[RMDB]
RNA sequence: GGGAACGACUCGAGUAGAGUCGAAAAGAUAUGGACCAUUCUGUCUCGAGACGAUUUGUAGUGUGACGUUCGGAAACGAACGGAGCACGCAGAUAAAUCGUCUCGAGACAGAGAUGGUCCUAAGUCACGAGUCAAUGGUGUUCGCACCAUUGACUCGAAAAGAAACAACAACAACAAC
Reactivity to DMS in 0.01 (KOAc 150mM, MgCl2 10mM, bicine 150mM(pH8.5), 24C), signal-to-noise 1, nucleotides 027 to 126: g000a120u000a300u000g000g000a010c030c000a020u000u010c000u000g040u000c000u000c000g000a050g000a010c000g000a040u000u000u000g000u000a180g020u030g000u030g000a300c010g000u000u000c000g020g000a150a160a300c010g010a000a000c000g020g000a300g010c020a000c030g000c230a050g000a120u000a070a020a020u000c000g000u000c000u010c000g030a000g020a000c010a000g010a020g000a000u000g000g000u000c000c010u000a000a070g030u000c040a270